[RMDB]
RNA sequence: GGGAACGACUCGAGUAGAGUCGAAAAUCUAUCACCAGCCCAUGUUUACGACACGAAUGGGCUGUUGCAAAUUACGUAUAGCUCUUGCAACAUCGUGUCGAAACGUUCCGAAGCUAUACGCCACAAACAUCGACGUUAACUUCGGUUAACGUCGAUGAAAAGAAACAACAACAACAAC
Reactivity to 2A3 in 0.01 (KOAc 150mM, MgCl2 10mM, bicine 150mM(pH8.5), 24C), signal-to-noise 1, nucleotides 027 to 126: u020c010u010a070u060c050a000c120c020a020g050c000c010c020a020u060g070u100u250u060a080c030g050a000c020a000c000g100a110a050u050g130g130g000c010u010g040u020u000g000c020a000a060a080u160u070a040c010g030u030a000u000a020g000c010u060c020u100u160g000c060a000a000c000a010u040c010g000u000g010u020c000g020a170a130a060c040g050u060u020c030c020g050a070a000g000c000u000a000u000a030c000g000c040c020a120c030a020a120a000
Reactivity to DMS in 0.01 (KOAc 150mM, MgCl2 10mM, bicine 150mM(pH8.5), 24C), signal-to-noise 1, nucleotides 027 to 126: u010c070u010a060u000c100a130c150c090a070g030c010c000c040a250u000g020u000u000u000a080c060g000a010c000a000c000g030a060a110u020g020g020g020c120u010g020u000u000g010c130a000a010a120u010u010a080c020g010u000a020u000a010g020c010u000c130u000u000g000c070a040a030c040a070u020c000g000u000g010u000c000g000a030a140a190c090g010u000u010c020c020g000a080a060g020c020u000a000u000a020c010g020c100c180a130c230a050a020a120
Conditions: 150 mM KOAc, 10 mM MgCl2 and 150 mM bicine (pH 8.5), 24 C. Structure probing data (2A3 and DMS) for a 177-nucleotide construct. Reactivities are rounded to 0.1 and cut off at 0 and 3. Reactivities are given for positions 27 through 126. 2A3 adducts were read by reverse transcription with SuperScript II with manganese. DMS adducts were read by reverse transcription with MarathonRT. The DMS profile rests on 779 reads.